[RMDB]
RNA sequence: GGGAACGACUCGAGUAGAGUCGAAAAGAUAUGGACUAGGCGAUGAGUCCGGGUCGGAAACGACCCAGGACGAGCCUGAAGUCCUAAGUCAAACAAAGUCCUGUCGGUUCGCCGACAGGACUUUGAAGAUAAAUCUAUACUUCGGUAUAGAUUUAUCAAAAGAAACAACAACAACAAC
Reactivity to DMS in 0.01 (KOAc 150mM, MgCl2 10mM, bicine 150mM(pH8.5), 24C), signal-to-noise 2, nucleotides 027 to 126: g020a040u000a300u020g000g000a040c000u000a060g010g020c000g010a110u000g000a220g000u010c000c010g000g000g020u020c020g010g000a110a080a180c010g010a010c000c010c000a030g080g000a010c020g020a180g000c000c010u000g010a100a050g010u000c000c000u000a030a060g020u000c040a090a160a280c020a010a030a030g000u010c000c000u010g010u010c000g010g010u000u010c240g020c010c000g000a020c000a000g000g010a000c000u000u000u000g000a060a150